[RMDB]
RNA sequence: GGGAACGACUCGAGUAGAGUCGAAAAACAGCGUACGUACUAGCAUGGCUAGUACAGCUAGCUAGCACGCACAGUGCUAGCAGUCUAGGGUACCAUGCACGAGAGUACUACGCUAGCGGUACCGUGAAUUUAACCAGUUGUUCGCAACUGGUUAAAUAAAAGAAACAACAACAACAAC
Reactivity to DMS in 0.01 (KOAc 150mM, MgCl2 10mM, bicine 150mM(pH8.5), 24C), signal-to-noise 9, nucleotides 027 to 126: a060c050a040g010c020g020u000a010c270g010u000a010c000u000a110g010c000a050u000g010g000c130u010a080g010u000a050c080a030g000c030u000a090g010c000u000a000g000c000a000c010g020c300a100c260a160g000u000g010c000u000a010g010c000a010g000u000c030u010a090g010g000g010u000a090c010c010a020u000g000c010a140c270g010a130g010a040g010u000a010c000u000a020c010g020c010u000a030g020c050g000g000u000a160c020c010g020u010g010a100
Reactivity to 2A3 in 0.01 (KOAc 150mM, MgCl2 10mM, bicine 150mM(pH8.5), 24C), signal-to-noise 6, nucleotides 027 to 126: a000c030a000g010c010g010u010a080c040g000u000a000c030u010a030g000c010a030u010g020g030c060u060a010g100u160a050c000a010g000c000u010a050g000c000u000a000g010c000a000c020g040c020a170c090a240g000u000g000c000u000a000g010c000a000g000u020c030u070a060g040g000g050u030a040c000c000a000u020g060c030a030c120g230a170g010a000g200u010a010c000u000a000c010g000c000u000a020g030c030g040g020u040a050c010c020g030u100g100a060
Chemical mapping of a 177-nucleotide RNA with DMS and 2A3.
DMS adducts were read by reverse transcription with MarathonRT.
Reactivities are given for positions 27 through 126.